[RMDB]
Structure probing data (2A3 and DMS) for a 177-nucleotide construct.
For 2A3 the reverse transcriptase was SuperScript II with manganese.
DMS adducts were read by reverse transcription with MarathonRT.
The 2A3 profile rests on 26,149 reads.
The reactions ran in a buffer of 150 mM KOAc, 10 mM MgCl2 and 150 mM bicine (pH 8.5), at 24 C.
The DMS profile rests on 19,607 reads.

RNA sequence: GGGAACGACUCGAGUAGAGUCGAAAAAUAGUGUUAUUCGUAACACUAUAUAUCCGAACUCAAGGAUUCGUUGCAGAGACAUGCAUGCUAGCAUGAAAGCAACUGAACAAGCGUUCGCGCUUGUUAAGUAAAUACUGAAGUUCGCUUCAGUAUUUACAAAAGAAACAACAACAACAAC
Reactivity to 2A3 in 0.01 (KOAc 150mM, MgCl2 10mM, bicine 150mM(pH8.5), 24C), signal-to-noise 9, nucleotides 027 to 126: a010u010a000g000u000g000u020u020a030u040u060c220g020u040a010a000c000a000c000u000a000u000a000u000a000u000c010c010g030a160a090c030u060c140a080a070g100g020a140u170u090c070g010u000u010g000c010a010g020a020g040a300c000a010u010g010c000a010u180g180c040u110a080g000c000a010u010g020a030a010a000g000c000a010a010c020u080g050a010a000c000a010a000g000c000g020u050u100c200g000c010g000c080u000u010g000u010u010a050a010
Reactivity to DMS in 0.01 (KOAc 150mM, MgCl2 10mM, bicine 150mM(pH8.5), 24C), signal-to-noise 9, nucleotides 027 to 126: a010u000a000g010u000g010u000u000a020u000u010c180g020u000a000a010c000a010c000u000a000u000a050u000a100u010c010c010g000a090a160c090u000c060a090a120g000g000a080u000u000c110g000u000u000g000c000a050g000a120g020a230c020a010u000g010c010a110u010g020c240u010a120g000c010a010u000g000a070a090a140g000c010a010a010c010u010g010a030a020c000a010a010g000c000g030u000u010c220g010c010g010c000u000u000g000u000u000a030a130